The data come from the RNA Mapping Database (RMDB), library M2PK90. This 177-nucleotide RNA was probed chemically with DMS and 2A3. For DMS, 7,012 sequencing reads were counted. The reactions ran in a buffer of 150 mM KOAc, 10 mM MgCl2 and 150 mM bicine (pH 8.5), at 24 C.
[RMDB]
RNA sequence: GGGAACGACUCGAGUAGAGUCGAAAAGUAAACAGGUUGAGUAGAGUGUGAGCCGCUGCGAUACCAGCUCGAUAACGAGCCCUUGGCAGCGCGUCGGAAGGACGGGUCCCUGAAUAUAAAAAAGUAAAUGACAUAAAAGAUUCGUCUUUUAUGUCAUAAAAGAAACAACAACAACAAC
Reactivity to DMS in 0.01 (KOAc 150mM, MgCl2 10mM, bicine 150mM(pH8.5), 24C), signal-to-noise 6, nucleotides 027 to 126: g010u000a050a090a130c080a050g000g000u000u000g000a080g010u010a070g020a090g020u000g010u010g010a120g000c070c020g000c020u010g010c010g010a060u000a080c100c170a190g010c010u000c010g010a170u010a100a130c070g010a020g010c000c090c080u010u000g000g020c030a030g000c020g000c050g010u010c020g010g010a090a070g000g010a060c060g010g000g020u010c020c010c010u000g000a060a070u010a100u020a000a040a050a070a060a100g010u000a040a060
Reactivity to 2A3 in 0.01 (KOAc 150mM, MgCl2 10mM, bicine 150mM(pH8.5), 24C), signal-to-noise 2, nucleotides 027 to 126: g090u120a020a110a060c040a060g010g060u100u110g060a050g030u080a030g030a040g040u120g030u020g060a010g050c020c010g000c020u010g030c030g010a020u020a050c030c020a030g010c020u000c010g050a170u100a300a120c030g000a020g000c050c000c000u020u030g070g000c010a000g000c020g030c010g010u010c030g000g080a060a040g030g020a030c020g000g000g030u010c020c000c030u040g020a080a010u220a050u170a060a140a020a010a010a010g040u070a070a190